Record summary: Source: RMDB library M2RFPK, as collected in RNAgym. This 207-nucleotide RNA was probed chemically with 2A3. For 2A3, 668 sequencing reads were counted. 2A3 adducts were read by reverse transcription with SuperScript II with manganese.
[RMDB]
RNA sequence: GGGAACGACUCGAGUAGAGUCGAAAAAGGUUCGCUGUGGUGCAACUCUUAUUAGUAACUAAUCCAAAGCAAGUAUAGGAGAACAGGUUUUUAACUAUUUUUAGGCAGAUAAAAAACAGUAUUUGACAAAAUCGAUUGUCGUUCGCGACAAUCGAAAGUCUUGCUUAUUCUUCGGAAUAAGCAAGACAAAAGAAACAACAACAACAAC
Reactivity to 2A3 in 0.01 (KOAc 150mM, MgCl2 10mM, bicine 150mM(pH8.5), 24C), signal-to-noise 1, nucleotides 027 to 156: a000g080g000u070u040c020g000c060u060g080u110g010g000u010g000c010a020a000c000u010c050u050u120a120u040u050a100g100u050a150a160c010u020a030a030u060c020c070a020a000a030g000c020a040a040g020u010a040u050a080g020g060a020g020a040a020c050a040g020g030u000u080u030u060u100a030a040c070u080a100u070u100u040u060u050a040g040g020c030a040g030a030u070a070a120a000a000a000a010c040a000g030u010a080u040u100u150g030a050c030a030a110a000a100u000c000g010a000u000u000g000u000c000g000u010u000c110g010c000g080a000c000a010a000u000c000g000a000a000a000